[RMDB]
RNA sequence: GGGAACGACUCGAGUAGAGUCGAAAACGCUGGGCACCUACCCACCAUGUAGGCGACGAUCAUCUGAAGCGCGCACGGAUGGGAGCCUAUGCAUGAGGGUGCCUGUGCUGAAGCGCGCACGGCAACCGAAAGGUGCGAUGACCCCAGUUCGCUGGGGCCUAUUGUUGGCGUUCGCGCCAACAAUAGGAAAAGAAACAACAACAACAAC
Reactivity to 2A3 in 0.01 (KOAc 150mM, MgCl2 10mM, bicine 150mM(pH8.5), 24C), signal-to-noise 2, nucleotides 027 to 156: c020g010c000u020g000g040g000c000a010c000c010u100a140c030c030c040a050c060c040a140u260g020u060a020g000g020c000g030a060c020g020a080u030c000a010u010c000u030g080a270a060g040c000g000c000g010c000a010c030g030g000a000u060g010g020g030a020g000c000c010u060a080u110g110c050a070u130g070a150g070g000g000u000g010c000c000u000g000u010g000c010u030g010a210a030g000c010g000c000g000c020a000c000g020g000c000a010a030c010c010g060a100a040a030g000g010u010g000c010g040a110u200g100a130c000c000c010c000a000g020u090u210c210g010c120u000g010g000g030g000